The data come from the RNA Mapping Database (RMDB), library TTRINS. This 177-nucleotide RNA was probed chemically with 2A3 and DMS. 2A3 is a SHAPE reagent: it acylates the 2'-hydroxyl of flexible nucleotides of all four kinds. The 2A3 profile rests on 19,935 reads. In probing experiments dimethyl sulfate is read out at A N1 and C N3, which are open when not base-paired. For 2A3 the reverse transcriptase was SuperScript II with manganese.
RNA sequence: GGGAACGACUCGAGUAGAGUCGAAAAGAUAUGGACGUGGGAGUCUUGGAUUUAUGGAAUUGAGCAAUGCCACUCGGAAACGAGUGGUGACUCAAUUCCAUUGUCAGACUCUUCACGUCCUAAGUCAGUUCUCAAUAAAGUUCGCUUUAUUGAGAACAAAAGAAACAACAACAACAAC
Reactivity to 2A3 in 0.01 (KOAc 150mM, MgCl2 10mM, bicine 150mM(pH8.5), 24C), signal-to-noise 7, nucleotides 027 to 126: g050a020u110a080u190g000g000a000c020g010u030g000g040g020a020g020u040c090u170u300g260g020a160u300u300u220a030u090g000g010a000a000u010u000g000a010g000c120a190a130u260g000c000c000a010c000u000c000g020g040a110a100a040c010g010a000g000u000g010g000u000g010a020c000u010c000a000a000u000u000c000c000a000u000u000g000u000c010a000g000a010c000u000c010u070u020c000a000c000g000u010c000c000u000a010a000g000u000c010a020
Reactivity to DMS in 0.01 (KOAc 150mM, MgCl2 10mM, bicine 150mM(pH8.5), 24C), signal-to-noise 5, nucleotides 027 to 126: g000a060u010a300u010g000g000a020c000g050u000g000g010g000a020g010u000c000u000u020g030g010a020u000u020u000a000u000g010g000a030a020u000u000g000a010g010c160a150a100u010g000c000c000a010c000u000c000g010g010a150a120a210c000g010a010g010u000g000g010u000g000a050c010u000c010a000a010u000u000c000c000a000u000u000g010u000c010a050g000a020c000u000c000u000u010c010a000c010g000u000c000c000u000a010a080g010u000c060a190